[RMDB]
RNA sequence: GGGAACGACUCGAGUAGAGUCGAAAAUGAAUCCAGCCACCGGUCCCGUGAUCGACUGUUGGAUUUGUUGCAGCGGAGAUUCCCACGGCAACCCACCCCCGCCCGAAGAGGCGAACGCCGGAUUGACCCCUACGAUCCUCUUCGGAGGAUCGUAGGGAAAAGAAACAACAACAACAAC
Reactivity to 2A3 in 0.01 (KOAc 150mM, MgCl2 10mM, bicine 150mM(pH8.5), 24C), signal-to-noise 1, nucleotides 027 to 126: u030g020a000a000u100c000c060a020g000c000c000a050c050c000g000g020u070c140c180c070g130u290g060a040u060c020g060a000c010u030g000u040u000g040g000a040u000u000u060g050u020u050g040c090a070g070c040g000g080a020g000a140u070u040c000c000c000a030c010g000g000c000a020a010c000c000c030a060c000c050c000c020c010g000c000c000c000g070a150a090g040a130g100g000c000g020a090a010c080g000c020c000g030g010a010u000u000g050a040c000
Reactivity to DMS in 0.01 (KOAc 150mM, MgCl2 10mM, bicine 150mM(pH8.5), 24C), signal-to-noise 1, nucleotides 027 to 126: u060g000a000a020u010c020c000a000g010c000c110a300c110c000g000g000u020c030c140c090g010u000g060a000u000c030g010a100c230u000g020u030u000g060g000a000u000u000u000g010u000u000g000c100a180g000c040g000g000a190g000a140u000u000c000c000c000a020c080g030g000c070a110a000c150c080c130a170c060c000c000c000c140g030c040c010c060g090a020a000g000a250g020g000c000g010a090a220c090g000c020c120g000g000a110u050u000g000a230c270